[RMDB]
RNA sequence: GGGAACGACUCGAGUAGAGUCGAAAAAGUCAAUGAUAAGAUCUUCACCAAGAGUGGCGUUAAUGACAUUUGUAUGUUUGAGAAUAAAACCACUUUGCCUACUAAUAUAGCUUUUGAACUCUAUGCUGCCUACAUUUAUGUUCGCAUAAAUGUAGGCAAAAGAAACAACAACAACAAC
Reactivity to 2A3 in 0.01 (KOAc 150mM, MgCl2 10mM, bicine 150mM(pH8.5), 24C), signal-to-noise 2, nucleotides 027 to 126: a000g060u050c030a010a060u140g040a030u060a100a090g010a060u010c010u040u060c050a040c080c010a040a010g000a010g020u020g010g000c050g030u040u130a070a020u080g030a000c020a040u110u160u250g220u130a070u030g040u000u070u050g060a070g060a060a050u110a050a040a010a010c040c000a010c000u030u020u010g010c000c010u050a080c020u040a100a070u130a040u060a110g020c010u040u100u030u050g040a020a020c000u030c010u030a050u080g030c000u060
Reactivity to DMS in 0.01 (KOAc 150mM, MgCl2 10mM, bicine 150mM(pH8.5), 24C), signal-to-noise 2, nucleotides 027 to 126: a070g020u010c040a030a100u000g000a090u020a080a060g000a080u000c060u010u000c030a050c070c060a080a090g000a030g010u000g000g000c130g020u000u000a070a070u000g010a050c020a020u000u020u020g020u010a040u000g000u000u010u010g000a120g010a060a070u010a050a100a110a060c040c030a020c000u000u000u000g020c070c040u000a070c110u010a080a030u000a090u030a030g010c080u000u000u000u000g010a100a030c090u000c010u000a080u000g000c120u000

Notes: Structure probing data (2A3 and DMS) for a 177-nucleotide construct. It was measured as part of the RMDB library 15KREP. DMS adducts were read by reverse transcription with MarathonRT. The RNA was probed in 150 mM KOAc, 10 mM MgCl2 and 150 mM bicine (pH 8.5) at 24 C. For DMS, 1,106 sequencing reads were counted.